Structure probing data (DMS and 2A3) for a 207-nucleotide construct. It was measured as part of the RMDB library OK3TST. The reactions ran in a buffer of 150 mM KOAc, 10 mM MgCl2 and 150 mM bicine (pH 8.5), at 24 C. Reactivities are given for positions 27 through 156.
RNA sequence: GGGAACGACUCGAGUAGAGUCGAAAAUACUUCCAGCUUCCCGAAGAGGCCAGGAAGGACGGUGCAAAGCUUCAAUUCGUAGUGCCCACUGGGAACUUUGGUGACAUUCUUGCUGGCUGGUACGCCAAGAAGCUCGGCCUGCCCAUGGAGCAACUCGAUCUUAAGUGCGAUUCGUCGCACUUAAGAUAAAAGAAACAACAACAACAAC
Reactivity to DMS in 0.01 (KOAc 150mM, MgCl2 10mM, bicine 150mM(pH8.5), 24C), signal-to-noise 2, nucleotides 027 to 156: u000a080c020u010u000c010c030a150g020c040u010u000c030c020c140g030a150a230g010a080g040g060c000c000a100g060g000a090a030g000g000a060c110g000g020u000g050c050a080a080a140g010c020u000u010c050a070a170u000u000c050g020u020a040g030u000g010c010c000c010a080c060u000g010g000g000a000a040c030u010u010u000g030g050u000g030a100c050a150u000u010c030u000u000g000c040u030g030g000c000u000g000g020u020a060c060g040c040c050a070a050g000a090a050g000c080u000c030g050g030c030c010u000g020c000c020c000a160u010g020g010a080g030c000a020a150c040u000c030g000
Reactivity to 2A3 in 0.01 (KOAc 150mM, MgCl2 10mM, bicine 150mM(pH8.5), 24C), signal-to-noise 3, nucleotides 027 to 156: u110a020c010u030u030c010c010a020g010c030u030u010c010c030c060g030a120a060g000a050g050g000c050c090a050g000g040a000a010g030g060a000c040g010g060u120g020c040a060a060a080g010c030u070u090c080a060a180u150u070c040g110u170a040g010u010g000c030c010c000a040c180u030g000g030g070a090a060c040u140u160u090g060g000u050g040a040c050a190u020u040c010u000u060g070c130u050g020g040c000u090g080g130u110a070c120g020c020c000a020a010g020a030a010g010c050u010c050g050g000c000c000u000g000c010c000c000a010u010g000g020a160g010c010a060a110c020u000c020g010